RNA sequence: GGGAACGACUCGAGUAGAGUCGAAAAGAUAUGGAUCUCUCAGGACAUGCUUUCGGGUCGGAAACGACCUUCGAGCAACAGCCUGGGAGAUCCUAAGUCAAAAGAUACGAUGUUCGCAUCGUAUCAAGGUAGUAGAGUGGUUCGCCACUCUACUACCAAAAGAAACAACAACAACAAC
Reactivity to DMS in 0.01 (KOAc 150mM, MgCl2 10mM, bicine 150mM(pH8.5), 24C), signal-to-noise 2, nucleotides 027 to 126: g000a020u000a030u010g010g000a020u000c000u000c010u010c000a010g030g000a020c160a270u010g020c000u000u000u000c300g000g000g030u000c000g040g000a000a000a010c000g010a010c000c000u000u020c140g000a010g020c000a140a090c200a130g010c000c000u020g000g000g000a000g000a000u020c000c000u000a000a050g020u000c010a110a080a140a180g000a020u000a030c000g020a010u000g000u000u010c300g040c010a010u000c010g000u000a010u000c010a070a050
Reactivity to 2A3 in 0.01 (KOAc 150mM, MgCl2 10mM, bicine 150mM(pH8.5), 24C), signal-to-noise 1, nucleotides 027 to 126: g010a010u040a010u060g020g010a030u020c000u020c020u000c030a010g030g020a040c170a300u300g000c000u030u000u010c020g010g000g010u000c000g000g010a000a030a000c000g000a010c000c000u010u010c010g010a000g010c010a010a020c050a010g030c030c000u000g010g010g000a000g000a020u050c000c000u000a000a010g010u000c000a000a020a000a190g000a000u000a010c000g010a010u040g060u060u110c300g000c120a010u000c020g000u000a000u010c000a000a000

The record gives the reactivity of an RNA of 177 nucleotides to DMS and 2A3. Source: RMDB library TTRDES, as collected in RNAgym. Conditions: 150 mM KOAc, 10 mM MgCl2 and 150 mM bicine (pH 8.5), 24 C. 2A3 adducts were read by reverse transcription with SuperScript II with manganese.